RNA sequence: GGGAACGACUCGAGUAGAGUCGAAAAUACUAUAAAGACACAUGCAAAUGUAUGUUUAUUGCAGCACUGUUCACAAUAGCAAAGACUUGGAACCAACCCAAAUGCCCAUCCAAUGAUAGACUGGAUAAAGAAAAUGUGGCACAUAUACACCAUGGAAUCAAUGCAUGAUCUUCGGAUCAUGCAUUGAAAAAGAAACAACAACAACAAC
Reactivity to 2A3 in 0.01 (KOAc 150mM, MgCl2 10mM, bicine 150mM(pH8.5), 24C), signal-to-noise 2, nucleotides 027 to 156: u080a010c060u050a030u100a160a180a000g070a050c030a000c000a100u050g000c040a040a100a120u180g050u040a090u040g040u060u090u030a140u070u000g000c010a010g010c000a000c050u010g030u100u030c020a030c000a060a120u050a060g020c020a030a040a030g110a060c000u020u040g000g030a020a020c020c000a010a010c020c010c020a010a030a080u100g000c000c000c030a010u010c020c010a020a060u040g040a120u100a060g070a040c040u050g000g000a020u060a080a100a030g080a020a070a050a010u030g010u100g010g020c030a020c050a090u170a010u030a070c060a000c000c000a030u010g040g060a010a030
Reactivity to DMS in 0.01 (KOAc 150mM, MgCl2 10mM, bicine 150mM(pH8.5), 24C), signal-to-noise 1, nucleotides 027 to 156: u010a020c060u000a190u010a080a140a060g010a120c010a030c030a060u000g000c130a130a140a120u000g010u000a040u010g030u010u000u000a060u020u000g000c030a080g020c010a090c060u000g020u000u010c030a090c050a090a110u000a090g000c030a030a140a090g010a110c050u000u000g000g030a050a090c000c010a050a060c030c010c010a000a040a130u000g010c050c000c020a160u010c060c020a090a120u010g010a070u010a070g010a050c010u010g000g040a050u000a010a060a090g000a130a090a090a050u000g030u010g000g070c010a050c090a060u010a060u000a070c080a030c020c010a050u010g020g000a110a160
Chemical mapping of a 207-nucleotide RNA with 2A3 and DMS. For DMS, 2,021 sequencing reads were counted. DMS adducts were read by reverse transcription with MarathonRT.